[RMDB]
RNA sequence: GGGAACGACUCGAGUAGAGUCGAAAACGCGGCGCGGCGGCCUCUCCUCGCUAUUGCGCGUUGCCGUUCACAGAGCUGCCUCCAGGGCUUGUUUUGGUAAUGCCUUUCUCCCAUUUAUGGGCUACCCAAUUAAGCCGACAUUCGUGUCGGCUUAAUUAAAAGAAACAACAACAACAAC
Reactivity to 2A3 in 0.01 (KOAc 150mM, MgCl2 10mM, bicine 150mM(pH8.5), 24C), signal-to-noise 2, nucleotides 027 to 126: c020g010c000g090g000c020g010c020g110g000c010g030g010c010c000u010c000u000c000c000u020c010g000c010u060a090u100u190g030c000g000c000g010u020u110g030c010c000g020u070u070c080a040c030a050g040a060g060c020u030g020c010c010u050c080c040a050g000g000g000c000u040u050g040u020u070u030u030g040g000u060a030a020u130g020c000c000u040u160u000c050u020c020c030c000a030u120u170u050a090u150g000g000g000c000u030a030c000c000c000
Reactivity to DMS in 0.01 (KOAc 150mM, MgCl2 10mM, bicine 150mM(pH8.5), 24C), signal-to-noise 2, nucleotides 027 to 126: c040g020c060g010g010c040g000c080g000g000c040g000g010c030c050u000c050u010c040c030u000c080g000c030u010a060u010u000g000c070g000c040g010u000u010g000c030c060g010u000u020c070a100c060a060g010a080g010c020u000g000c050c020u010c090c040a100g010g000g010c060u000u010g000u010u000u010u030g010g000u000a070a050u060g010c030c000u010u010u000c060u000c020c010c010a130u030u020u030a130u010g000g000g020c060u000a140c120c000c110